Source: RMDB library OK1LIB, as collected in RNAgym. An RNA of 177 nucleotides, treated with DMS and 2A3 and read out base by base. The RNA was probed in 150 mM KOAc, 10 mM MgCl2 and 150 mM bicine (pH 8.5) at 24 C. The 2A3 profile rests on 1,657 reads.
RNA sequence: GGGAACGACUCGAGUAGAGUCGAAAAAGGUAGCUUCGGGGAUAAAGAGAUAAGAAGGUCGUGGCCGGAAUGGUCGGGGGACAAAGUGUUUCUCGAGCUGAACGGAGUCAAUUCAACGGAAGCGAUCGACCAGGCAUUUAUUCGUAAAUGCCUGGUCAAAAGAAACAACAACAACAAC
Reactivity to DMS in 0.01 (KOAc 150mM, MgCl2 10mM, bicine 150mM(pH8.5), 24C), signal-to-noise 2, nucleotides 027 to 126: a080g000g090u010a070g000c020u030u000c010g000g000g020g010a060u010a080a100a040g010a140g010a080u030a080a140g000a130a070g000g010u030c040g020u030g030g000c000c000g000g040a010a010u020g020g030u010c030g010g030g000g000g030a030c000a070a120a160g010u030g010u000u000u000c000u020c010g000a080g010c010u000g010a300a140c000g000g020a020g030u020c110a100a040u000u010c080a030a190c080g020g000a050a040g020c040g020a060u010c040
Reactivity to 2A3 in 0.01 (KOAc 150mM, MgCl2 10mM, bicine 150mM(pH8.5), 24C), signal-to-noise 3, nucleotides 027 to 126: a010g130g000u020a030g000c000u020u060c060g050g000g000g020a020u110a060a180a000g100a020g020a060u170a250a010g110a110a000g040g040u030c050g020u080g030g000c000c000g050g030a090a030u080g060g120u010c030g000g000g000g000g010a000c020a030a300a090g180u210g020u050u070u000c000u000c000g040a060g110c060u020g030a020a010c000g000g030a010g030u110c090a030a120u070u060c040a020a060c000g040g020a040a080g000c020g020a100u170c060